[RMDB]
RNA sequence: GGGAACGACUCGAGUAGAGUCGAAAAAGCUUUAGAUCGCGACUGCUACGGCUAGGCGGACCGCUCCAGGCUGGCAACAGAGCAGGGAAUAGCUGACGCUCAGACUGACUAGCAAGACUGCAGAUGUAGCUUGAACCCGCUUCGACUUGAACUACAUGGAGAAUACAAUGUUCGCAUUGUAUUCUCCAAAAGAAACAACAACAACAAC
Reactivity to DMS in 0.01 (KOAc 150mM, MgCl2 10mM, bicine 150mM(pH8.5), 24C), signal-to-noise 1, nucleotides 027 to 156: a070g020c010u000u000u000a030g000a060u000c020g000c030g000a190c060u000g020c010u000a050c170g000g030c010u000a060g020g040c020g020g020a120c050c000g040c140u030c020c020a050g000g000c020u020g040g030c030a110a140c110a090g020a050g010c040a170g000g030g000a090a060u000a070g030c020u000g020a220c070g080c020u020c030a140g000a100c020u010g010a110c160u000a020g120c000a060a070g010a300c050u000g000c020a200g010a080u020g030u000a070g020c000u000u060g010a300a220c020c000c020g080c140u020u000c030g000a150c030u010u000g000a050a050c030u010a170c070a260u020
Reactivity to 2A3 in 0.01 (KOAc 150mM, MgCl2 10mM, bicine 150mM(pH8.5), 24C), signal-to-noise 3, nucleotides 027 to 156: a000g090c100u200u090u080a080g020a080u060c030g000c020g080a080c030u060g000c040u030a000c050g000g000c010u020a060g050g000c010g010g040a030c030c010g010c010u030c020c000a020g030g020c000u020g020g090c040a090a050c020a080g050a020g070c020a120g020g000g030a110a130u090a100g000c000u010g050a020c070g000c040u050c050a040g010a240c020u050g040a070c050u060a020g020c000a060a120g020a070c050u080g020c010a020g010a190u080g010u040a010g000c000u010u030g020a050a070c010c010c000g040c040u060u080c030g080a150c000u040u140g030a100a040c050u100a020c040a100u040
Structure probing data (DMS and 2A3) for a 207-nucleotide construct.
For 2A3, 1,392 sequencing reads were counted.
Values are in units of 0.01, from 0 to 300, in steps of 10.
The reactions ran in a buffer of 150 mM KOAc, 10 mM MgCl2 and 150 mM bicine (pH 8.5), at 24 C.